Chemical mapping of a 170-nucleotide RNA with DMS and 2A3. The reactions ran in a buffer of 150 mM KOAc, 10 mM MgCl2 and 150 mM bicine (pH 8.5), at 24 C. For DMS, 10,478 sequencing reads were counted. For 2A3, 3,331 sequencing reads were counted. For DMS the reverse transcriptase was MarathonRT. For 2A3 the reverse transcriptase was SuperScript II with manganese.
[RMDB]
RNA sequence: GGGAACGACUCGAGUAGAGUCGAAAAGGUCCUCGUGUGUACCUGGUUGAGAGGCUCAUUGCUUGUGAAAAUCCAUUCAUGGUUAACCAAUUGGCUUAUAGCUCUAGUGCAAAUGGCAGCCUGGUUGAGACCUGCCGGUUCGCCGGCAGGAAAAGAAACAACAACAACAAC
Reactivity to DMS in 0.01 (KOAc 150mM, MgCl2 10mM, bicine 150mM(pH8.5), 24C), signal-to-noise 4, nucleotides 027 to 129: g050g010u000c000c000u020c090g040u030g020u040g020u000a000c070c020u020g020g040u010u010g020a020g010a110g010g020c060u020c110a090u030u050g030c030u000u080g050u000g020a090a070a070a100u020c010c050a000u040u040c140a090u010g000g050u090u090a100a200c050c060a070a120u040u010g010g040c070u000u000a080u010a210g010c070u020c090u000a060g030u040g040c120a020a070a000u000g010g020c070a080g000c060c000u000g010g020u030u040g010a000g020a150
Reactivity to 2A3 in 0.01 (KOAc 150mM, MgCl2 10mM, bicine 150mM(pH8.5), 24C), signal-to-noise 3, nucleotides 027 to 129: g030g000u040c000c000u000c000g030u050g000u030g000u030a080c010c010u030g000g000u070u090g100a070g000a010g030g000c000u000c030a050u100u110g010c070u030u100g030u000g060a070a000a030a110u050c040c000a030u110u100c020a070u070g040g000u080u020a030a040c000c000a050a230u080u040g000g030c020u090u140a030u110a170g000c000u010c000u010a070g020u080g100c060a000a030a180u120g020g000c080a030g050c000c000u040g000g020u020u020g000a030g010a040